[RMDB]
RNA sequence: GGGAACGACUCGAGUAGAGUCGAAAAUGGCGGUCCUUGGACUAAAAGGUCAAAAUCCGGCCAGAAGGGUGCCUGGCUGUUUUGCUUUUGGCAUGGGGGUGUCCCAUAGCUGGUAGGUGCAUUUUGGCGAUAAAUAAUUAUUCGUAAUUAUUUAUCGAAAAGAAACAACAACAACAAC
Reactivity to 2A3 in 0.01 (KOAc 150mM, MgCl2 10mM, bicine 150mM(pH8.5), 24C), signal-to-noise 9, nucleotides 027 to 126: u090g030g010c010g010g030u040c020c000u040u070g070g020a020c010u060a040a060a060a080g070g010u060c020a020a020a000a090u060c040c020g020g000c000c010a010g030a060a060g050g030g020u060g030c000c010u020g040g010c020u030g070u050u090u100u090g010c010u030u060u100u170g050g000c010a040u050g010g000g000g010g080u090g070u090c010c000c000a040u080a030g010c030u020g040g020u040a050g010g040u050g020c060a080u040u050u050u120g080g020
Reactivity to DMS in 0.01 (KOAc 150mM, MgCl2 10mM, bicine 150mM(pH8.5), 24C), signal-to-noise 6, nucleotides 027 to 126: u010g010g020c050g010g010u010c020c010u010u010g010g010a090c040u010a040a070a090a060g010g000u020c030a040a040a080a060u030c100c040g000g010c020c010a030g010a100a060g010g010g010u010g000c030c000u000g000g000c020u010g000u010u010u020u010g000c030u000u010u010u010g000g020c020a050u010g000g010g000g010g020u020g000u010c010c010c020a050u020a060g000c020u000g000g010u020a050g020g010u010g010c110a080u010u010u010u010g010g010
Conditions: 150 mM KOAc, 10 mM MgCl2 and 150 mM bicine (pH 8.5), 24 C. The record gives the reactivity of an RNA of 177 nucleotides to 2A3 and DMS. For DMS, 29,991 sequencing reads were counted. It was measured as part of the RMDB library OK1LIB.